[RMDB]
Structure probing data (2A3 and DMS) for a 177-nucleotide construct. For DMS the reverse transcriptase was MarathonRT. 2A3 adducts were read by reverse transcription with SuperScript II with manganese.
RNA sequence: GGGAACGACUCGAGUAGAGUCGAAAAAGUCGAUUGUAUCCUUCUUGGUUACCAAAAGACCAAAGAACAAUGGGAAUGGCAAGCCAAACAUCAAAAUGAAUUGCAUUGGCAAGCUAAUAUAACCAUCGAUCCAUGGUAGUUUCGACUACCAUGGAUCAAAAGAAACAACAACAACAAC
Reactivity to 2A3 in 0.01 (KOAc 150mM, MgCl2 10mM, bicine 150mM(pH8.5), 24C), signal-to-noise 5, nucleotides 027 to 126: a000g080u050c040g080a120u080u110g020u070a060u050c000c000u040u120c060u080u120g010g000u010u050a120c050c090a080a040a020a070g050a020c000c000a000a110a000g050a070a030c070a080a070u030g000g000g060a020a140u050g010g000c000a050a000g000c020c000a030a050a080c030a060u100c060a110a140a120a140u180g140a110a120u130u090g050c230a100u000u020g000g000c000a000a020g000c020u030a090a000u110a010u010a050a030c010c000a050u120c090
Reactivity to DMS in 0.01 (KOAc 150mM, MgCl2 10mM, bicine 150mM(pH8.5), 24C), signal-to-noise 2, nucleotides 027 to 126: a140g020u000c010g000a160u000u000g030u020a030u010c030c010u050u000c110u050u000g000g000u000u010a040c090c200a090a120a000a200g030a040c000c060a060a080a000g020a140a140c160a110a070u000g000g000g000a040a090u000g000g070c000a050a300g000c000c000a000a020a190c010a060u030c030a090a040a010a190u140g020a030a070u000u060g000c300a120u030u000g000g060c000a090a180g000c000u000a000a100u040a070u000a080a230c000c000a000u010c270
Notes
It was measured as part of the RMDB library OK1LIB. The reactions ran in a buffer of 150 mM KOAc, 10 mM MgCl2 and 150 mM bicine (pH 8.5), at 24 C.